[RMDB]
RNA sequence: GGGAACGACUCGAGUAGAGUCGAAAAGAAAAGACGAUGUUAUUAUGAUUCUCGAGUAAUAGCAGGUCAUGCGUACUACUCGCCGAACGGAAGGCAGACUGUUCGCGCAAUGAAACGAGUAAGAAAACGUAGGGUACCCUUUCGAGGGUACCCUACGAAAAGAAACAACAACAACAAC
Reactivity to DMS in 0.01 (KOAc 150mM, MgCl2 10mM, bicine 150mM(pH8.5), 24C), signal-to-noise 2, nucleotides 027 to 126: g000a080a200a080a030g060a060c020g000a080u000g000u050u060a050u060u000a000u000g010a220u000u000c070u000c060g050a220g020u140a040a000u000a000g000c000a010g030g000u000c060a120u000g120c070g000u000a010c190u000a020c030u000c000g040c300c000g000a000a000c000g030g000a060a090g030g000c230a030g020a060c000u000g030u000u000c000g000c040g000c030a140a190u000g000a100a090a130c060g010a040g060u010a020a110g000a110a120a060a050
Reactivity to 2A3 in 0.01 (KOAc 150mM, MgCl2 10mM, bicine 150mM(pH8.5), 24C), signal-to-noise 2, nucleotides 027 to 126: g070a000a100a000a120g050a020c130g070a120u040g030u000u010a000u000u010a000u050g120a120u240u000c100u080c110g000a010g010u010a000a000u000a020g000c000a000g030g040u000c040a040u120g000c000g000u020a020c000u000a000c000u010c020g000c020c020g080a090a100c040g030g050a070a030g140g080c000a080g160a060c000u000g050u040u040c000g020c020g020c110a020a110u170g040a080a030a040c040g000a060g030u080a080a080g070a130a100a000a000
The data come from the RNA Mapping Database (RMDB), library OK1LIB. This 177-nucleotide RNA was probed chemically with DMS and 2A3. Values are in units of 0.01, from 0 to 300, in steps of 10. For DMS the reverse transcriptase was MarathonRT.